[RMDB]
The record gives the reactivity of an RNA of 177 nucleotides to DMS and 2A3. As a SHAPE reagent, 2A3 marks flexible, mostly unpaired nucleotides at the ribose 2'-OH. Conditions: 150 mM KOAc, 10 mM MgCl2 and 150 mM bicine (pH 8.5), 24 C. The 2A3 profile rests on 5,369 reads. It was measured as part of the RMDB library M2PK90.

RNA sequence: GGGAACGACUCGAGUAGAGUCGAAAAACUUUGGCCGACGCUGCUAGGCGGGUGCGCACUGCUGUCUGGCCCGGCGCCGCGCUAGGGGGCACGUUUCGCUCUGCGGAGGGUAACCGGGCUGAAAUAAACCAUUUAGAGAUUUCGAUCUCUAAAUGGUAAAAGAAACAACAACAACAAC
Reactivity to DMS in 0.01 (KOAc 150mM, MgCl2 10mM, bicine 150mM(pH8.5), 24C), signal-to-noise 6, nucleotides 027 to 126: a080c070u000u000u000g020g010c010c010g000a100c070g010c050u000g010c060u010a100g020g010c030g010g010g010u000g010c080g020c050a070c060u000g010c050u000g000u010c060u010g000g010c010c020c020g010g010c110g020c020c010g010c040g020c130u010a120g010g000g000g000g010c030a090c190g000u000u010u010c080g000c010u000c020u000g010c050g010g000a110g010g010g010u000a080a110c020c010g000g010g010c000u000g000a030a050a090u010a100a110
Reactivity to 2A3 in 0.01 (KOAc 150mM, MgCl2 10mM, bicine 150mM(pH8.5), 24C), signal-to-noise 3, nucleotides 027 to 126: a000c050u110u070u090g070g010c010c010g020a030c020g020c040u070g010c040u060a090g040g010c030g010g040g010u090g040c050g010c030a030c070u090g010c020u050g040u160c060u060g030g000c010c020c000g030g000c020g010c010c000g000c000g000c090u170a120g070g040g000g030g000c020a010c090g060u040u120u160c060g020c010u010c040u080g020c010g040g040a100g080g060g000u040a090a070c010c010g020g000g000c020u010g020a020a010a000u100a040a100